[RMDB]
RNA sequence: GGGAACGACUCGAGUAGAGUCGAAAACGAGUCCAAUCACUCCGAGCAGUUUGACGUCCCGGUGUCGCAGCUUGCCUUUGAUAGGGGUGCGGAGAAAACUGCGCAUAUGACGAUAGAAAAGGGGCGACCCGUAGGGUGCUUUCGAGCACCCUACGGGAAAAGAAACAACAACAACAAC
Reactivity to DMS in 0.01 (KOAc 150mM, MgCl2 10mM, bicine 150mM(pH8.5), 24C), signal-to-noise 2, nucleotides 027 to 126: c110g010a100g020u030c000c050a120a060u010c080a110c030u020c000c020g000a120g010c030a010g020u000u000u000g000a110c000g000u000c010c000c020g010g060u050g000u020c040g030c090a010g000c080u000u030g020c070c000u000u020u010g000a120u030a120g000g000g020g010u000g000c020g010g000a070g000a120a020a070a080c040u000g000c020g080c140a040u040a070u010g020a070c090g000a080u050a110g000a060a020a200a160g010g020g000g030c000g000a280
Reactivity to 2A3 in 0.01 (KOAc 150mM, MgCl2 10mM, bicine 150mM(pH8.5), 24C), signal-to-noise 2, nucleotides 027 to 126: c080g000a020g060u040c060c000a000a130u080c020a010c010u040c030c020g050a010g040c040a080g050u020u140u190g040a020c000g060u000c000c000c000g000g080u030g020u080c020g000c000a010g040c030u100u200g050c000c000u120u050u080g200a110u170a090g000g000g000g020u060g060c000g010g040a040g080a050a100a000a030c020u030g000c000g000c000a000u000a040u230g100a010c050g100a000u070a140g170a040a070a000a000g040g000g000g000c010g020a000